[RMDB]
RNA sequence: GGGAACGACUCGAGUAGAGUCGAAAAUACUCGUAGACGGAGUUAAGGUUAAGGUUAGCGAUUCAUACGAUCUACAUAAUCACGAAGGCGUUAAGUUAGAGAUUACCGUAGUUAAGCUUAUACGUAAUGAGAUCGUCAACUUCGGUUGACGAUCUCAAAAAGAAACAACAACAACAAC
Reactivity to DMS in 0.01 (KOAc 150mM, MgCl2 10mM, bicine 150mM(pH8.5), 24C), signal-to-noise 1, nucleotides 027 to 126: u000a050c050u010c000g000u010a090g010a110c120g020g080a070g040u000u010a120a120g010g020u040u000a150a130g000g010u010u040a050g010c000g030a180u000u010c100a020u000a100c120g010a030u000c010u000a040c040a100u010a020a080u010c120a060c100g020a070a070g020g000c110g000u000u000a040a040g010u000u010a110g030a080g010a010u000u000a100c180c020g000u000a100g000u000u000a050a120g010c040u020u000a040u010a070c080g000u000a070a030
Structure probing data (DMS) for a 177-nucleotide construct.
The reactions ran in a buffer of 150 mM KOAc, 10 mM MgCl2 and 150 mM bicine (pH 8.5), at 24 C.
Values are in units of 0.01, from 0 to 300, in steps of 10.
It was measured as part of the RMDB library OK2TRN.
For DMS, 664 sequencing reads were counted.